[RMDB]
RNA sequence: GGGAACGACUCGAGUAGAGUCGAAAAGAUAUGGAAGCUUUGUCAGCUUGGAUUUAUAUGGGCAAUAUAUUCGGAAACGAAUAUAGCCCAUAUUGUCAGCUGACAUGGCUUCCUAAGUCAAAACAACCAGCGUUAUGUUCGCAUAACGCUGGUUGAAGAUAGCGUAAGAGUUCGCUCUUACGCUAUCAAAAGAAACAACAACAACAAC
Reactivity to 2A3 in 0.01 (KOAc 150mM, MgCl2 10mM, bicine 150mM(pH8.5), 24C), signal-to-noise 4, nucleotides 027 to 156: g010a010u060a020u100g000g000a000a010g000c000u000u020u010g010u000c000a000g000c040u150u150g110g000a070u300u300u060a000u010a000u010g000g000g010c010a300a020u030a000u000a000u070u000c000g010g010a130a060a040c010g010a000a030u010a020u030a030g070c020c000c010a000u000a000u000u000g000u000c000a000g000c000u010g000a000c000a000u000g000g000c000u000u000c000c000u000a000a010g010u010c010a000a020a060a140c010a000a000c000c010a000g000c000g000u000u010a000u010g050u050u080c250g000c160a010u000a010a000c020g000c000u000g000g000u000u000g000a000a000
Reactivity to DMS in 0.01 (KOAc 150mM, MgCl2 10mM, bicine 150mM(pH8.5), 24C), signal-to-noise 1, nucleotides 027 to 156: g000a090u000a210u000g010g000a050a000g020c000u000u000u000g000u000c000a000g000c010u020u010g040g030a040u010u000u000a000u000a000u010g010g000g000c000a140a170u010a030u000a010u000u000c010g030g000a290a180a300c010g020a030a000u000a010u000a130g030c000c000c000a000u000a000u010u000g000u010c000a020g020c010u020g000a020c000a000u000g000g000c000u010u000c010c000u000a010a050g020u000c030a050a050a130a210c000a020a040c010c000a020g000c000g050u000u020a000u020g000u000u010c300g000c020a000u000a000a010c020g030c010u000g000g030u000u000g000a020a120